[RMDB]
RNA sequence: GGGAACGACUCGAGUAGAGUCGAAAAGAUAUGGACUCAUUAGUCUUUUGACGUUCAACCCAUCGGAAACGAUGGCAAGAACGAUAAGACUACUGUGAGUCCUAAGUCAAACGUAGCUUCGGCUACGCAAGACCUAUGGGUUCGCCCAUAGGUCUUGAAAAGAAACAACAACAACAAC
Reactivity to 2A3 in 0.01 (KOAc 150mM, MgCl2 10mM, bicine 150mM(pH8.5), 24C), signal-to-noise 3, nucleotides 027 to 126: g040a020u070a050u160g000g000a000c000u000c010a020u050u060a010g000u010c000u040u090u070u180g300a160c080g000u000u010c010a030a030c000c000c000a000u000c000g010g030a040a050a050c000g000a000u000g000g000c010a070a070g000a000a000c000g000a000u040a010a000g020a010c000u020a050c180u200g030u010g070a000g000u000c000c000u000a030a020g030u010c050a090a050a120c020g000u000a000g010c000u100u060c300g180g000c000u010a000c010g000
Reactivity to DMS in 0.01 (KOAc 150mM, MgCl2 10mM, bicine 150mM(pH8.5), 24C), signal-to-noise 7, nucleotides 027 to 126: g010a050u010a300u010g000g000a000c000u000c000a020u000u000a020g000u000c010u000u000u010u000g010a220c100g020u000u000c000a090a300c300c000c000a000u000c000g000g000a130a090a250c000g000a010u000g000g000c010a030a300g000a010a010c000g020a090u000a020a000g030a010c000u010a000c300u000g020u000g010a000g000u000c000c010u000a020a100g020u000c050a060a130a180c010g020u000a000g000c000u000u010c290g030g000c000u000a000c000g020